[RMDB]
RNA sequence: GGGAACGACUCGAGUAGAGUCGAAAAGGGGAGCGCAGUGUGGUGACCAGGGACAUCCGCUGCUCGGAGGAUGAGAAGCUGUGUGACCCCAACACCAGGCCUGUAGGGGAGAAGAACUGCACGGGCCGACACUCGGAACAUUCGUGUUCCGAGUGUCAAAAGAAACAACAACAACAAC
Reactivity to 2A3 in 0.01 (KOAc 150mM, MgCl2 10mM, bicine 150mM(pH8.5), 24C), signal-to-noise 1, nucleotides 027 to 126: g000g000g000g000a010g020c030g000c030a010g000u070g040u090g110g130u090g000a130c030c020a040g040g000g040a000c010a020u000c000c020g010c030u070g030c020u000c020g100g000a050g060g000a060u070g030a040g020a150a000g030c010u000g020u000g020u130g300a300c010c000c000c000a000a030c000a030c000c070a010g000g030c010c000u010g050u060a110g080g030g000g020a150g100a170a030g060a030a040c010u120g050c130a020c020g000g020g000c000c030
Reactivity to DMS in 0.01 (KOAc 150mM, MgCl2 10mM, bicine 150mM(pH8.5), 24C), signal-to-noise 1, nucleotides 027 to 126: g000g010g030g020a300g000c110g020c020a020g020u000g010u010g020g030u020g000a140c060c020a110g000g000g010a300c010a010u000c050c020g000c090u030g010c060u000c120g000g020a180g000g010a040u000g000a140g000a050a130g010c030u020g000u010g000u000g010a130c000c020c000c020a140a140c070a050c010c020a060g020g010c070c010u000g010u000a300g000g020g030g010a110g010a050a100g020a070a070c000u000g040c130a010c040g000g010g030c080c090

Source: RMDB library OK2TRN, as collected in RNAgym. Chemical mapping of a 177-nucleotide RNA with 2A3 and DMS. DMS adducts were read by reverse transcription with MarathonRT. The 2A3 profile rests on 1,348 reads. Values cover nucleotides 27 to 126.